[RMDB]
RNA sequence: GGGAACGACUCGAGUAGAGUCGAAAAAAUUAGAGGCAAUUUGAAAUAAUUGAAAUUAGCUCAACCCUACUGCACUUACCGAACUAGAUAACGGUGUAGUAGGGGUAAAUUCUCCGCAUUCGGUGCGCAACCACCUGAGGUUUCGACCUCAGGUGAACCUUGUGAAUGUCUUCGGACAUUCACAAGGAAAAGAAACAACAACAACAAC
Reactivity to 2A3 in 0.01 (KOAc 150mM, MgCl2 10mM, bicine 150mM(pH8.5), 24C), signal-to-noise 2, nucleotides 027 to 156: a000a000u190u170a070g000a020g040g050c060a010a000u040u020u050g170a300a130a090u260a140a080u180u180g070a000a020a080u160u000a080g040c020u040c020a020a000c000c000c000u000a000c000u000g010c000a000c000u010u040a010c070c000g060a090a020c010u050a060g050a260u160a170a020c110g000g030u000g000u010a000g000u000a000g000g010g010g000u010a000a000a000u060u000c030u000c040c030g020c010a020u000u040c130g100g000u010g030c030g000c050a100a060c100c020a000c010c000u000g010a000g040g010u030u080u140c180g070a070c000c000u000c000a000g000g000u000g000a010a000